[RMDB]
RNA sequence: GGGAACGACUCGAGUAGAGUCGAAAACUGUGUCCAGUGACUCCAAGACUGGCUCAGUGUUCAUGGUGCUAAGUUCACUCUCUUCAGUUUGAGUCUGGAUAUGUGAGGCCGAAAAGAACUCUUCAAUAUCAAAAUUGAUUCCAGGGUUCUGGGCUGGCAUAAUGCGCAUGUUCGCAUGCGCAUUAUGAAAAGAAACAACAACAACAAC
Reactivity to 2A3 in 0.01 (KOAc 150mM, MgCl2 10mM, bicine 150mM(pH8.5), 24C), signal-to-noise 5, nucleotides 027 to 156: c010u010g000u020g050u070c000c010a020g000u020g120a130c050u060c110c070a090a040g080a060c020u000g000g000c000u020c030a010g010u010g050u090u100c080a100u120g070g030u060g040c030u140a120a110g060u060u050c010a010c000u040c010u010c010u100u080c030a100g050u060u090u120g060a040g030u030c040u060g030g000a060u050a060u200g090u040g060a070g060g000c030c020g060a050a080a020a040g020a010a010c000u020c000u060u050c030a050a040u060a080u170c080a050a130a200a170u090u070g020a020u090u050c090c070a020g000g020g000u010u000c000u020g000g000g030c020u020g020g000
Reactivity to DMS in 0.01 (KOAc 150mM, MgCl2 10mM, bicine 150mM(pH8.5), 24C), signal-to-noise 3, nucleotides 027 to 156: c010u000g000u000g010u000c010c010a050g020u000g020a130c090u010c180c150a120a170g000a050c010u000g020g010c050u010c000a030g030u000g020u010u000c020a210u000g020g000u010g000c060u010a090a160g010u000u000c020a040c030u000c020u000c030u010u000c040a170g030u010u000u000g010a050g030u000c010u000g020g010a080u010a070u000g010u000g010a110g020g020c010c010g020a040a090a080a040g000a010a020c010u010c010u000u000c030a020a050u000a060u010c070a050a080a090a160u000u000g010a110u000u010c040c040a050g000g010g000u000u000c010u010g000g030g040c030u000g000g000